[RMDB]
This 177-nucleotide RNA was probed chemically with 2A3 and DMS. The reactions ran in a buffer of 150 mM KOAc, 10 mM MgCl2 and 150 mM bicine (pH 8.5), at 24 C. Values cover nucleotides 27 to 126. Source: RMDB library OK2TRN, as collected in RNAgym.

RNA sequence: GGGAACGACUCGAGUAGAGUCGAAAAUGGACGAGUUCAUGGCGCGCGUCGCUAAAGAGCACGAAGCGCUCGCCACCCGCCUGAAUGCCGAGAAUCUGGCGCUCUGGGACGAAAUCCGCGCCGUCGCCGCCUACAAGGCAUUCGUGCCUUGUAGGCGAAAAGAAACAACAACAACAAC
Reactivity to 2A3 in 0.01 (KOAc 150mM, MgCl2 10mM, bicine 150mM(pH8.5), 24C), signal-to-noise 1, nucleotides 027 to 126: u160g020g020a090c040g030a030g060u050u100c130a070u170g010g000c020g000c000g040c000g000u040c030g000c020u090a300a270a040g250a070g020c020a010c090g050a120a000g000c010g000c030u000c000g000c000c000a070c020c020c030g070c000c000u120g000a120a000u060g020c040c010g040a060g070a070a110u120c170u140g060g000c000g000c000u030c040u060g120g080g000a080c050g070a070a020a080u000c000c000g030c000g040c030c020g010u060c000g010c120
Reactivity to DMS in 0.01 (KOAc 150mM, MgCl2 10mM, bicine 150mM(pH8.5), 24C), signal-to-noise 1, nucleotides 027 to 126: u000g000g010a070c010g010a040g020u000u000c090a120u010g020g010c000g030c050g050c090g010u000c110g060c080u000a030a100a050g010a090g030c000a070c110g000a070a080g000c220g040c010u000c000g010c110c020a110c080c030c080g000c050c080u020g020a110a130u000g050c090c030g010a070g000a080a070u000c080u000g040g000c000g010c010u000c060u000g030g000g010a020c050g010a090a070a130u000c110c000g020c020g000c040c000g010u000c130g010c090